Structure probing data (2A3) for a 207-nucleotide construct. For 2A3, 1,163 sequencing reads were counted. Conditions: 150 mM KOAc, 10 mM MgCl2 and 150 mM bicine (pH 8.5), 24 C.
RNA sequence: GGGAACGACUCGAGUAGAGUCGAAAAGCCUUCAUGGCAUGUCUUUAACAAUACCAACAAACAUUACUCUAUCUGUGAAGGUGUACAAUGCGGUGGGUGCUCUGGCCAAAGCCGUCUACGAGAAGAUGUUCCUGUGGAUGGUCACCCGCAUCAACCACGCUCACUACGUAUUCGUACGUAGUGAGCGAAAAGAAACAACAACAACAAC
Reactivity to 2A3 in 0.01 (KOAc 150mM, MgCl2 10mM, bicine 150mM(pH8.5), 24C), signal-to-noise 3, nucleotides 027 to 156: g020c010c000u000u000c010a060u030g030g000c110a050u080g050u070c070u080u230u200a190a080c070a140a050u250a170c070c100a100a060c110a100a120a020c060a110u220u250a140c080u060c040u120a080u080c030u030g030u000g030a050a040g010g000u070g010u060a090c050a060a070u030g060c050g000g020u050g010g030g040u070g020c060u030c100u160g160g020c040c000a090a040a030g020c010c000g000u030c010u010a010c030g050a000g030a150a030g070a080u200g120u100u000c010c020u030g010u030g000g010a000u020g000g000u030c010a040c010c010c020g000c020a030u060c020a010a030c020c000a060